RNA sequence: GGGAACGACUCGAGUAGAGUCGAAAAACCUCUUGCCCUGAGUGGAUGGACGAUUUUGAGGCGGAUCCUAAAGGCAAAUAUGCCCAGAAUCUGCUUAAGAAGUUGAUUGGCGGUGAUGUCACUCCAGAUAGCGGCACGUUCGCGUGCCGCAAAAGAAACAACAACAACAAC
Reactivity to 2A3 in 0.01 (KOAc 150mM, MgCl2 10mM, bicine 150mM(pH8.5), 24C), signal-to-noise 2, nucleotides 027 to 129: a000c000c000u000c030u050u110g070c000c000c000u000g000a000g030u000g060g000a030u000g060g000a020c000g130a160u000u010u000u300g090a010g000g000c010g000g000a000u000c010c000u180a050a030a000g000g000c000a000a140a080u220a110u280g000c000c000c000a000g000a020a020u000c000u000g000c000u000u020a030a000g040a020a000g020u050u050g150a260u080u020g010g000c040g000g070u020g000a030u030g000u050c060a000c050u000c000c020a050g080a040u220a040
Reactivity to DMS in 0.01 (KOAc 150mM, MgCl2 10mM, bicine 150mM(pH8.5), 24C), signal-to-noise 2, nucleotides 027 to 129: a090c020c010u090c140u110u080g010c000c030c190u000g180a170g040u060g000g030a000u000g030g000a120c050g000a090u000u000u000u040g000a170g000g010c000g000g010a010u000c000c050u060a100a080a060g030g000c030a030a040a130u150a110u000g030c030c000c120a160g020a060a000u000c000u050g040c090u030u030a040a010g040a030a100g070u020u020g010a080u070u010g050g020c140g000g000u000g020a110u030g000u210c030a000c000u000c040c100a000g040a180u250a070